[RMDB]
RNA sequence: GGGAACGACUCGAGUAGAGUCGAAAAGAUAUGGAUAUAGACAUGAAGGAGUGUCGGAAACGACAUGACUUCAACAGCUAUGAUCCUAAGUCAAGGGGUACUUCGUCGUUCGCGACGAAGUACCCAACACACACGGGACGUUCGCGUCCCGUGUGUGAAAAGAAACAACAACAACAAC
Reactivity to DMS in 0.01 (KOAc 150mM, MgCl2 10mM, bicine 150mM(pH8.5), 24C), signal-to-noise 1, nucleotides 027 to 126: g000a080u000a220u000g000g000a020u000a040u000a000g010a040c070a190u010g020a090a000g000g000a300g000u000g000u000c000g000g000a170a040a100c000g000a010c000a000u000g010a300c000u040u000c000a060a060c300a140g010c000u000a000u000g000a000u000c000c000u030a020a130g000u000c050a080a030g000g040g000g020u000a000c000u000u000c010g100u000c000g010u000u010c300g070c000g000a000c020g000a000a000g000u000a000c000c000c010a000a080